About this RNA: Structure probing data (2A3 and DMS) for a 177-nucleotide construct. The RNA was probed in 150 mM KOAc, 10 mM MgCl2 and 150 mM bicine (pH 8.5) at 24 C.
RNA sequence: GGGAACGACUCGAGUAGAGUCGAAAAGACGCCUGUGUGGCGAAGCGAGCAAUGGGAUAAGCCGCAAUAGAAGAUGAGAUGGAAGCGGCAAGAUAGAAUGCUCGCAAUGAGAUCCAUCUCACAGAGAACCGAUUAUGAGGUUCGCCUCAUAAUCGGUAAAAGAAACAACAACAACAAC
Reactivity to 2A3 in 0.01 (KOAc 150mM, MgCl2 10mM, bicine 150mM(pH8.5), 24C), signal-to-noise 5, nucleotides 027 to 126: g080a010c040g000c000c020u240g060u110g130u270g220g000c010g000a060a000g000c000g010a000g000c020a050a200u120g120g050g050a030u090a160a000g000c000c000g010c020a010a040u110a100g150a150a010g140a220u050g010a000g010a010u010g010g010a120a000g000c000g000g000c000a000a010g010a010u090a050g150a150a030u090g000c010u000c000g000c000a000a100u130g010a040g010a010u010c000c000a010u000c000u020c000a020c000a010g170a010g040a060
Reactivity to DMS in 0.01 (KOAc 150mM, MgCl2 10mM, bicine 150mM(pH8.5), 24C), signal-to-noise 3, nucleotides 027 to 126: g000a160c020g000c010c000u000g000u040g020u060g010g020c020g010a150a100g000c000g020a010g010c000a040a090u060g040g010g030a140u000a100a120g010c050c000g040c030a210a160u040a040g010a150a080g010a130u010g000a000g000a010u000g000g000a050a160g000c000g000g020c010a010a040g000a080u000a080g000a130a060u000g000c000u000c010g010c000a030a050u030g010a120g000a170u000c020c000a030u000c000u000c010a050c100a170g000a160g020a170